[RMDB]
RNA sequence: GGGAACGACUCGAGUAGAGUCGAAAAGCCACUGGACACAGCUGUGGCGCGACCCCUGGAUCUGAGCACAGCCCCUCCGGUGCAGACAGAUGGGGUCAGAGCCCCCUGCGGAGGCCUGUCAUUGCAGGGCAUCAUAACCGUUCGCGGUUAUGAUGCCAAAAGAAACAACAACAACAAC
Reactivity to DMS in 0.01 (KOAc 150mM, MgCl2 10mM, bicine 150mM(pH8.5), 24C), signal-to-noise 1, nucleotides 027 to 126: g020c000c020a000c040u020g000g000a180c170a100c140a100g010c040u010g020u000g010g000c000g030c080g000a060c010c000c000c020u000g020g030a090u000c020u010g000a120g010c030a030c030a050g030c050c030c010c030u000c050c050g000g020u000g000c020a070g030a280c020a040g000a080u000g000g010g000g000u000c030a030g000a170g020c000c000c040c050c040u000g010c040g010g020a030g010g020c170c040u000g010u000c090a090u020u000g050c070a110g010
About this RNA
The record gives the reactivity of an RNA of 177 nucleotides to DMS. It was measured as part of the RMDB library OK2TRN. The reactions ran in a buffer of 150 mM KOAc, 10 mM MgCl2 and 150 mM bicine (pH 8.5), at 24 C.